[RMDB]
RNA sequence: GGGAACGACUCGAGUAGAGUCGAAAAAUCUAUUGGCCUCGUGGCAAGGUGCUCGGUGGCUCGUCGUCCAUGAACGCAAUGAUGUGGGUGCGUGGAUUCGCAUCAGACUACGAUGAGUGGGCCGCGCGUUAUACAACGUGUUCGCACGUUGUAUAACAAAAGAAACAACAACAACAAC
Reactivity to DMS in 0.01 (KOAc 150mM, MgCl2 10mM, bicine 150mM(pH8.5), 24C), signal-to-noise 9, nucleotides 027 to 126: a070u010c040u000a120u010u010g010g010c020c010u000c160g010u000g010g010c070a120a070g010g010u000g010c010u000c030g010g030u000g010g010c010u000c020g020u000c100g010u000c100c070a100u010g010a100a130c150g010c110a100a110u010g000a070u000g010u010g010g000g010u000g010c080g020u000g010g010a090u010u000c010g010c010a020u000c010a070g010a130c100u000a060c040g000a050u000g000a090g010u000g010g010g010c000c030g000c110g010c110
Reactivity to 2A3 in 0.01 (KOAc 150mM, MgCl2 10mM, bicine 150mM(pH8.5), 24C), signal-to-noise 9, nucleotides 027 to 126: a010u060c060u050a120u070u150g110g010c000c010u070c140g100u180g040g010c070a050a030g130g000u100g020c010u010c020g000g040u040g040g000c000u000c010g020u010c010g010u000c060c020a110u150g070a120a040c100g000c110a050a160u150g050a070u070g050u050g060g010g030u040g030c050g030u060g060g100a100u100u070c010g000c000a010u010c010a010g080a050c070u080a020c040g100a110u020g000a000g020u060g010g110g000c000c000g020c010g000c010